[RMDB]
This 177-nucleotide RNA was probed chemically with DMS.
For DMS, 787 sequencing reads were counted.
The data come from the RNA Mapping Database (RMDB), library M2PK50.
The RNA was probed in 150 mM KOAc, 10 mM MgCl2 and 150 mM bicine (pH 8.5) at 24 C.
DMS adducts were read by reverse transcription with MarathonRT.
RNA sequence: GGGAACGACUCGAGUAGAGUCGAAAAUCUGUAACGUUCGCGUUACAGAAAAGGGUAUGAGAGUACCUGAUCAGAUCAUCCCAGAUCAGGAAACAGAUCAAAAAAGGGCCACGUUCGCGUGGCCCAAUCCUUCUCUGUAGUUCGCUACAGAGAAGGAAAAAGAAACAACAACAACAAC
Reactivity to DMS in 0.01 (KOAc 150mM, MgCl2 10mM, bicine 150mM(pH8.5), 24C), signal-to-noise 1, nucleotides 027 to 126: u000c010u000g030u000a010a010c000g010u010u000c210g030c000g000u000u030a000c000a000g000a020a050a090a110g000g020g020u000a010u000g010a130g010a200g000u000a010c010c010u010g010a070u010c030a060g030a020u000c030a050u010c000c000c000a080g000a010u010c010a210g000g000a090a060a050c090a140g000a060u000c030a040a050a060a230a120a110g000g000g030c060c010a000c000g000u000u000c120g020c050g070u010g030g000c000c000c000a000a010